This 177-nucleotide RNA was probed chemically with DMS and 2A3. Reactivities are given for positions 27 through 126. The RNA was probed in 150 mM KOAc, 10 mM MgCl2 and 150 mM bicine (pH 8.5) at 24 C. The data come from the RNA Mapping Database (RMDB), library RFMREP. High DMS reactivity at an A or C suggests that its Watson-Crick edge is free. The DMS profile rests on 2,502 reads.
[RMDB]
RNA sequence: GGGAACGACUCGAGUAGAGUCGAAAACUCAAUGUAGACGUUCGCGUCUACAUUGAGAAAACCAACUUCAGCUACAGUGUUAGCUAAGUUUGAAACUUAGAGUACCGACUUCGGUCGGUACUCUAAGGUUGUAGAUAGGCUUCGGCCUAUCUACAACAAAAGAAACAACAACAACAAC
Reactivity to DMS in 0.01 (KOAc 150mM, MgCl2 10mM, bicine 150mM(pH8.5), 24C), signal-to-noise 3, nucleotides 027 to 126: c000u000c000a010a010u000g010u010a000g000a010c000g010u010u000c190g030c010g020u000c000u000a000c000a000u010u000g000a010g000a030a050a100a190c010c010a040a020c000u000u000c220a010g010c000u010a000c010a300g050u010g000u010u000a010g000c000u000a010a020g000u000u000u010g000a080a090a300c000u000u000a010g010a020g000u000a000c000c000g000a020c000u000u030c190g030g010u000c000g010g010u000a000c000u000c000u000a000a000g010
Reactivity to 2A3 in 0.01 (KOAc 150mM, MgCl2 10mM, bicine 150mM(pH8.5), 24C), signal-to-noise 4, nucleotides 027 to 126: c000u010c000a000a000u000g010u010a000g000a030c000g030u040u010c280g030c000g110u000c000u010a000c000a000u000u010g000a000g000a000a000a000a010c010c010a010a000c000u040u080c160a010g020c010u010a030c030a220g260u070g050u300u000a000g010c000u000a010a010g020u010u110u160g220a190a120a010c010u000u000a000g000a000g000u000a000c000c020g010a000c030u030u080c290g010g000u000c000g000g000u000a000c000u000c000u000a000a000g000